Conditions: 150 mM KOAc, 10 mM MgCl2 and 150 mM bicine (pH 8.5), 24 C. Structure probing data (DMS and 2A3) for a 177-nucleotide construct. It was measured as part of the RMDB library TTRDES.
[RMDB]
RNA sequence: GGGAACGACUCGAGUAGAGUCGAAAAGAUAUGGAAUCACCAGCCGAUAAGCUGGGUUCGGAAACGAACCACAGCUUUUGACGGCUGUGUGAUUCCUAAGUCAAAGUCCUCGGUUCGCCGAGGACAACUAAUUUAAACAGUUCGCUGUUUAAAUUAGAAAAGAAACAACAACAACAAC
Reactivity to DMS in 0.01 (KOAc 150mM, MgCl2 10mM, bicine 150mM(pH8.5), 24C), signal-to-noise 7, nucleotides 027 to 126: g010a030u000a260u010g000g000a020a000u000c000a010c000c000a010g020c000c000g010a120u020a020a020g020c000u000g010g000g010u000u000c000g010g000a070a050a130c010g010a010a010c000c000a110c000a010g010c000u000u000u010u000g030a200c130g010g020c000u000g000u020g010u000g000a010u000u000c000c000u010a010a080g000u000c020a110a140a160g000u000c000c000u000c000g000g000u000u020c300g030c010c000g010a020g010g010a000c010a010a080
Reactivity to 2A3 in 0.01 (KOAc 150mM, MgCl2 10mM, bicine 150mM(pH8.5), 24C), signal-to-noise 3, nucleotides 027 to 126: g010a000u040a020u120g010g000a010a010u000c020a000c010c000a000g010c010c020g210a220u100a300a000g000c010u010g000g030g010u010u010c020g010g010a040a030a020c010g000a010a010c010c010a110c000a070g020c010u030u010u020u060g130a050c040g000g000c000u000g020u000g000u000g010a000u000u000c000c010u000a000a000g010u000c020a100a010a130g000u000c000c000u000c010g000g050u080u080c300g040c080c000g000a000g020g000a000c000a000a000